[RMDB]
RNA sequence: GGGAACGACUCGAGUAGAGUCGAAAAAAUACCGAUUCACGGGGACAGUUGCGCCAAAGUCUGGAGCUUCUGGUGACGAAAUCCGUCUCAGGCUUUACAACGUCACCGACAGUCAGACCGUGAAUACCGAAAUCCGCUUUGACCCUGUUAAUGCGGCCGAGGUCAGAUAGUUCGCUAUCUGACCUCGAAAAGAAACAACAACAACAAC
Reactivity to 2A3 in 0.01 (KOAc 150mM, MgCl2 10mM, bicine 150mM(pH8.5), 24C), signal-to-noise 1, nucleotides 027 to 156: a000a000u170a090c040c000g010a020u000u010c000a000c020g030g000g000g000a000c000a020g050u080u080g070c010g050c090c030a250a230a020g230u120c050u010g000g000a060g030c020u000u140c010u160g000g000u000g000a000c000g020a060a020a080u050c030c010g230u200c050u060c250a040g000g000c060u050u030u150a080c070a170a020c100g000u000c000a000c010c070g020a070c040a040g000u000c020a000g190a160c030c000g000u000g000a000a000u100a110c020c020g000a070a120a020u000c000c000g000c120u110u000u070g100a160c120c050c030u050g090u080u130a020a000u120g000c020g000g000c020
The record gives the reactivity of an RNA of 207 nucleotides to 2A3. The data come from the RNA Mapping Database (RMDB), library OK3TST. For 2A3, 354 sequencing reads were counted. 2A3 adducts were read by reverse transcription with SuperScript II with manganese.